[RMDB]
RNA sequence: GGGAACGACUCGAGUAGAGUCGAAAACGCAAGGCGAGCCGAUGAAUUGCCGAGAAGCCUGGCUCGAAAUCGUCGACGCAUCGACGACGGUCCUGCCAUGAGACCGUAACGAGGACAUGUCGCCUCGGUUCUAGAGUGGUUUCGACCACUCUAGAACAAAAGAAACAACAACAACAAC
Reactivity to 2A3 in 0.01 (KOAc 150mM, MgCl2 10mM, bicine 150mM(pH8.5), 24C), signal-to-noise 7, nucleotides 027 to 126: c090g010c040a030a020g100g020c010g010a010g010c000c020g030a060u070g060a060a200u150u130g050c060c030g030a050g050a080a000g030c010c060u050g020g000c000u000c010g050a070a040a050u060c020g000u000c000g010a030c070g010c140a120u080c010g010a010c010g010a000c000g000g000u010c000c020u070g110c040c010a120u140g030a040g010a130c000c000g000u010a020a030c010g000a010g000g010a020c040a170u160g040u170c060g010c000c000u000c020g020
Reactivity to DMS in 0.01 (KOAc 150mM, MgCl2 10mM, bicine 150mM(pH8.5), 24C), signal-to-noise 4, nucleotides 027 to 126: c100g010c150a090a060g000g000c020g020a040g030c030c040g000a120u020g020a100a080u020u000g010c040c030g010a070g010a120a150g000c050c090u020g000g010c000u000c030g000a050a070a070u010c020g020u010c000g010a080c270g000c120a100u010c010g010a040c020g000a050c000g000g010u000c000c030u010g000c090c110a140u010g030a120g010a020c010c000g030u040a050a100c040g010a030g000g010a110c090a150u030g010u000c060g000c040c010u000c000g020
Structure probing data (2A3 and DMS) for a 177-nucleotide construct. Reactivities are given for positions 27 through 126. It was measured as part of the RMDB libraries RFM100 and RFMREP.